Chemical mapping of a 177-nucleotide RNA with DMS and 2A3.
The RNA was probed in 150 mM KOAc, 10 mM MgCl2 and 150 mM bicine (pH 8.5) at 24 C.
As a SHAPE reagent, 2A3 marks flexible, mostly unpaired nucleotides at the ribose 2'-OH.
For DMS the reverse transcriptase was MarathonRT.
Values cover nucleotides 27 to 126.
The DMS profile rests on 5,812 reads.
[RMDB]
RNA sequence: GGGAACGACUCGAGUAGAGUCGAAAAUGACAGCUGAGUCUGGAACAGACUGUUAAAUGUUACCUAUUGCCAUCAUUUAACUUGAGGUUUACCAUUAAUUCACAUGAAAUUAAUGUGGCCAGGAGAGCAUCCGGGAUUAAUUCGUUAAUCCCGGAUGAAAAGAAACAACAACAACAAC
Reactivity to DMS in 0.01 (KOAc 150mM, MgCl2 10mM, bicine 150mM(pH8.5), 24C), signal-to-noise 6, nucleotides 027 to 126: u010g010a030c020a020g000c020u000g000a260g000u010c030u000g000g020a120a180c040a040g000a110c030u010g000u000u000a030a090a070u000g000u000u000a120c030c030u010a100u010u000g000c030c050a080u010c040a030u000u000u010a060a080c100u000u000g010a200g010g010u000u000u010a110c140c020a020u000u000a010a010u010u000c030a170c220a170u010g000a070a020a030u000u000a010a010u000g010u000g000g000c010c000a020g000g010a110g010a150g010
Reactivity to 2A3 in 0.01 (KOAc 150mM, MgCl2 10mM, bicine 150mM(pH8.5), 24C), signal-to-noise 5, nucleotides 027 to 126: u070g020a000c010a010g010c010u020g010a020g100u020c000u050g020g000a030a050c010a010g200a210c000u000g010u040u030a110a150a080u150g030u100u070a100c030c010u080a140u100u230g000c030c010a110u040c010a030u060u080u080a120a080c000u040u050g050a050g080g000u080u100u130a080c010c000a000u010u010a020a020u050u050c050a060c110a300u230g090a070a030a010u020u020a010a010u010g010u050g040g060c030c010a040g030g050a070g020a000g050